Chemical mapping of a 207-nucleotide RNA with 2A3.
2A3 adducts were read by reverse transcription with SuperScript II with manganese.
[RMDB]
RNA sequence: GGGAACGACUCGAGUAGAGUCGAAAAACGGCUGGCUACGGCCAGCCGAAUCGGGCCAAAGGCAGUCGCCCGACGACACAGGCGAUCGUUCGCCCAAGCGCUGCACACGACUAUACGUGGUCGUGAAUUGAUCACGCAACCUUCGGGUUGCGUGAAACCUAUUAGCUUGGUUCGCCAAGCUAAUAGGAAAAGAAACAACAACAACAAC
Reactivity to 2A3 in 0.01 (KOAc 150mM, MgCl2 10mM, bicine 150mM(pH8.5), 24C), signal-to-noise 1, nucleotides 027 to 156: a000c010g000g020c000u010g020g000c010u000a050c250g100g000c020c010a000g010c020c020g000a000a010u000c010g010g000g000c020c030a060a090a090g170g000c020a040g010u080c020g010c040c000c000g000a020c020g010a000c000a020c020a190g160g070c010g020a050u070c090g020u070u110c050g250c000c020c010a000a040g030c010g000c080u090g030c030a010c000a000c010g010a000c020u050a020u120a270c290g120u150g060g010u010c000g000u010g000a000a010u120u150g040a030u020c000a000c000g000c010a010a000c010c010u050u040c170g070g020g000u000u000g000c000g000u000g000a000a000a000
The RNA was probed in 150 mM KOAc, 10 mM MgCl2 and 150 mM bicine (pH 8.5) at 24 C.